[RMDB]
RNA sequence: GGGAACGACUCGAGUAGAGUCGAAAAAGCACGGUUUUUGAGGACGCAUUUUGUCCGUGCGGUAAUGCCCUCCUUUACACUUUCUCGCAUGGUGCGGGAGUGUGGAGUGGAAACAAAAGCUAGUCUCGAUAGGCGGUUAACUUCGGUUAACCGCCAACCACGAUAACCUCUUCGGAGGUUAUCGUGGAAAAGAAACAACAACAACAAC
Reactivity to 2A3 in 0.01 (KOAc 150mM, MgCl2 10mM, bicine 150mM(pH8.5), 24C), signal-to-noise 2, nucleotides 027 to 156: a000g000c000a000c000g000g010u000u000u000u010u020g120a100g020g030a010c040g030c120a150u040u000u000u000g000u020c000c000g000u000g010c020g040g070u120a070a030u270g000c020c010c020u030c010c000u120u160u070a000c000a000c000u090u140u090c000u030c000g080c020a090u250g250g020u240g160c000g000g010g000a010g000u000g000u000g000g000a000g000u190g060g060a010a000a010c000a000a000a010a000g050c020u060a040g000u010c010u000c010g020a070u080a100g000g020c000g000g000u000u010a020a000c040u020u070c220g040g000u000u010a000a000c000c000g010c000c000a000a000